[RMDB]
RNA sequence: GGGAACGACUCGAGUAGAGUCGAAAAACUCUUUUGAAGUUGACUGUCGAUGUUGCUAACCCUAGCACUCCAGCCUACACUUUUACAACAGUGAAACCUGGCGCAGCAUUUAGUGUGUUAGCAUGCUACCGGGGUCUGUUCGCAGACCCCAAAAGAAACAACAACAACAAC
Reactivity to DMS in 0.01 (KOAc 150mM, MgCl2 10mM, bicine 150mM(pH8.5), 24C), signal-to-noise 2, nucleotides 027 to 129: a090c020u030c010u010u050u000u010g070a100a020g040u060u060g010a130c050u020g010u020c000g000a080u000g090u050u000g010c040u070a000a010c040c000c040u040a000g040c000a300c080u010c000c000a060g000c000c000u050a300c080a050c000u030u020u080u080a160c200a010a090c220a000g070u020g000a000a000a000c300c000u000g000g060c130g000c150a080g070c000a170u000u000u030a050g010u000g000u010g000u000u060a000g070c010a040u060g000c000u000a120c210c000
Reactivity to 2A3 in 0.01 (KOAc 150mM, MgCl2 10mM, bicine 150mM(pH8.5), 24C), signal-to-noise 2, nucleotides 027 to 129: a000c040u050c000u030u230u050u070g010a100a000g000u000u000g050a010c000u000g100u250c030g000a030u050g010u030u010g000c000u030a040a010c000c000c010u000a000g000c030a010c000u000c000c000a000g000c000c010u050a020c000a000c000u040u060u010u300a130c050a150a020c050a030g000u010g000a060a030a050c000c000u040g000g000c010g000c060a110g000c000a020u010u020u260a010g000u000g050u010g050u080u000a000g000c000a000u050g020c000u010a010c030c020
Structure probing data (DMS and 2A3) for a 170-nucleotide construct. The DMS profile rests on 2,933 reads. 2A3 adducts were read by reverse transcription with SuperScript II with manganese. The data come from the RNA Mapping Database (RMDB), library 15KLIB.